[RMDB]
RNA sequence: GGGAACGACUCGAGUAGAGUCGAAAACGACUUACCUUCGGGUAAGUCGACAUAGGUGAGUUCAUCGGAUAGCUGCGUAGGUGAGUUCAUCGGAUAGCUGCCACAUGUAACGGUUCGCCGUUACAAAGUGUAGCUAGUCGUUCGCGACUAGCUACACAAAAGAAACAACAACAACAAC
Reactivity to 2A3 in 0.01 (KOAc 150mM, MgCl2 10mM, bicine 150mM(pH8.5), 24C), signal-to-noise 2, nucleotides 027 to 126: c010g010a000c000u010u000a000c000c000u000u050c250g020g000g000u000a020a020g000u000c010g000a010c000a060u200a030g030g000u030g030a040g000u020u030c000a010u010c030g040g080a100u050a090g120c120u160g020c120g080u120a050g010g070u030g030a010g020u000u040c000a000u020c040g000g010a030u060a030g040c070u080g070c010c020a050c020a100u070g010u000a000a000c010g000g000u030u070c200g010c050c010g040u010u000a000c010a030a020a020
Reactivity to DMS in 0.01 (KOAc 150mM, MgCl2 10mM, bicine 150mM(pH8.5), 24C), signal-to-noise 2, nucleotides 027 to 126: c010g010a030c010u000u000a000c000c000u000u010c280g030g020g000u000a000a000g000u000c000g030a040c160a030u020a100g020g020u000g040a030g000u000u010c050a010u000c010g030g000a160u010a090g000c040u010g010c070g020u000a250g010g010u000g010a010g000u000u000c010a030u000c000g000g000a050u020a040g010c060u000g010c010c060a080c150a080u020g040u000a000a000c000g000g000u000u010c170g030c040c020g010u000u010a000c010a030a040a050
The data come from the RNA Mapping Database (RMDB), library M2PK50. Chemical mapping of a 177-nucleotide RNA with 2A3 and DMS. The RNA was probed in 150 mM KOAc, 10 mM MgCl2 and 150 mM bicine (pH 8.5) at 24 C. Values cover nucleotides 27 to 126.